Chemical mapping of a 207-nucleotide RNA with DMS and 2A3. It was measured as part of the RMDB library OK3TST. Values cover nucleotides 27 to 156.

RNA sequence: GGGAACGACUCGAGUAGAGUCGAAAAAAAUUAUAUCUGUACGGGACGUAACGGAUACGCCCAUGAAUUUAAAUUUCACACGGUAUUUUUAUUUGCGAUUAACUGGUUCUACUCAUGUAUCAACAAAAGCUUGGUUACAAGAUAUAACAGGAUACUGCAUAGCAUCUAUUUUCGAAUAGAUGCUAUGAAAAGAAACAACAACAACAAC
Reactivity to DMS in 0.01 (KOAc 150mM, MgCl2 10mM, bicine 150mM(pH8.5), 24C), signal-to-noise 1, nucleotides 027 to 156: a060a050a060u000u000a030u010a010u000c030u010g020u010a180c090g000g030g050a030c010g000u000a050a120c110g000g020a300u000a020c000g010c000c010c030a270u000g010a090a030u030u010u000a100a220a210u000u000u000c020a150c060a060c050g020g090u000a010u030u000u010u010u000a060u050u010u030g010c000g010a100u000u000a060a080c060u010g000g000u000u000c030u010a040c040u010c020a050u000g030u000a040u000c000a070a120c040a030a100a090a100g040c060u000u000g030g010u010u010a090c030a030a050g000a070u000a130u000a060a070c050a060g000g000a030u000a030c030u000g030
Reactivity to 2A3 in 0.01 (KOAc 150mM, MgCl2 10mM, bicine 150mM(pH8.5), 24C), signal-to-noise 2, nucleotides 027 to 156: a000a000a000u250u100a060u000a000u000c030u050g050u020a010c020g020g030g220a120c010g000u040a100a030c040g070g020a030u010a090c020g000c010c010c020a010u040g020a010a020u110u270u220a100a130a010u020u110u120c040a020c020a000c070g060g000u130a060u000u080u050u050u040a080u080u110u160g030c020g070a030u130u080a090a040c090u040g020g030u030u040c020u080a030c040u020c050a030u060g010u010a010u050c000a020a020c000a080a190a020a010g000c000u070u060g000g010u110u090a070c000a000a000g000a010u040a000u010a140a050c040a030g150g020a040u090a070c010u100g040